RNA sequence: GGGAACGACUCGAGUAGAGUCGAAAAAGCGGUUGCAACUUAAAGACUACUUUAUCAAGCAGAUUAGGGCGUACAUGGAUGGUAAAAUACCGGUUGCCACUGUCUCUAAUGAGUCAAGCGCUUCAAGCUGGAUUAUUAUCUUCGGAUAAUAAUCCAGAAAAGAAACAACAACAACAAC
Reactivity to DMS in 0.01 (KOAc 150mM, MgCl2 10mM, bicine 150mM(pH8.5), 24C), signal-to-noise 3, nucleotides 027 to 126: a040g010c020g020g010u000u000g010c040a090a130c080u000u010a030a030a070g000a120c070u000a080c060u000u010u000a060u010c070a060a120g000c090a080g000a110u010u000a040g010g000g020c060g010u000a030c070a060u020g010g010a040u010g010g010u000a050a070a120a120u000a050c020c030g010g020u000u000g000c010c020a090c090u000g000u000c010u000c030u010a050a060u010g010a300g000u010c020a020a030g010c060g000c000u000u000c100a060a080g010
Reactivity to 2A3 in 0.01 (KOAc 150mM, MgCl2 10mM, bicine 150mM(pH8.5), 24C), signal-to-noise 3, nucleotides 027 to 126: a010g030c030g080g030u030u030g000c030a090a030c020u100u120a120a120a050g070a030c020u040a070c020u260u140u030a100u110c060a090a030g070c040a030g040a100u080u150a070g010g000g060c050g040u020a030c070a070u240g070g020a080u080g010g090u160a090a130a090a040u110a090c020c000g040g000u020u060g000c000c000a090c070u030g020u020c000u000c010u050a130a150u070g010a000g030u060c030a020a020g060c020g010c000u080u060c020a040a020g000